Chemical mapping of a 177-nucleotide RNA with DMS. Values are in units of 0.01, from 0 to 300, in steps of 10. The RNA was probed in 150 mM KOAc, 10 mM MgCl2 and 150 mM bicine (pH 8.5) at 24 C. It was measured as part of the RMDB library OK2TRN.
RNA sequence: GGGAACGACUCGAGUAGAGUCGAAAACACCAGGGUUGAAAACCUGGGGGAUGACCUGUGGUUAGGGGUGAAAGGCCAAUCAAACUCCGUGAUAGCUGGUUCUCCCCGAAAUGCAUUUAGGUGCAGCUCCUGGUCCAUUUUUCGAAAUGGACCAGGAAAAAGAAACAACAACAACAAC
Reactivity to DMS in 0.01 (KOAc 150mM, MgCl2 10mM, bicine 150mM(pH8.5), 24C), signal-to-noise 1, nucleotides 027 to 126: c020a080c110c000a020g000g020g020u010u000g020a140a110a080a170c000c000u010g040g000g000g000g000a080u010g000a110c040c000u000g030u000g000g060u000u020a220g000g000g030g000u010g030a050a130a230g000g000c070c150a100a050u000c070a020a130a100c070u020c070c070g030u010g020a010u000a190g020c010u000g010g000u000u000c120u000c000c010c000c000g000a030a080a120u030g000c000a020u000u020u010a090g000g010u000g050c000a070g010c140